RNA sequence: GGGAACGACUCGAGUAGAGUCGAAAAGGCUUCAGCAGGGUAAGGUUAAUCUGGUUGCUGAGUUGCUGUAGGCAGACCAGAGGCAACUUGGGAAGUGGGGAUUAAAGGAAAAAGAGAGAGAGAGAGAGAGACAGACAGAGAAGUGAGAAUAUAAACACUCAGCUACUAUGUUCGCAUAGUAGCUGAGAAAAGAAACAACAACAACAAC
Reactivity to 2A3 in 0.01 (KOAc 150mM, MgCl2 10mM, bicine 150mM(pH8.5), 24C), signal-to-noise 2, nucleotides 027 to 156: g010g000c040u090u070c070a040g000c000a000g030g050g030u120a060a050g030g000u050u140a030a070u000c000u020g020g010u000u040g010c030u030g040a090g130u110u080g050c060u070g020u060a030g010g040c030a000g020a130c010c000a030g020a010g030g000c010a040a010c000u090u060g010g000g030a060a060g070u060g010g010g040g000a000u070u150a050a100a060g030g020a100a030a000a020a000g090a050g000a000g010a000g000a000g000a000g060a000g000a020g010a000g050a020c020a000g030a030c030a010g040a010g010a120a000g030u060g020a030g040a100a000u210a010u200a090a120a020c130a030
Record summary
Conditions: 150 mM KOAc, 10 mM MgCl2 and 150 mM bicine (pH 8.5), 24 C. Chemical mapping of a 207-nucleotide RNA with 2A3.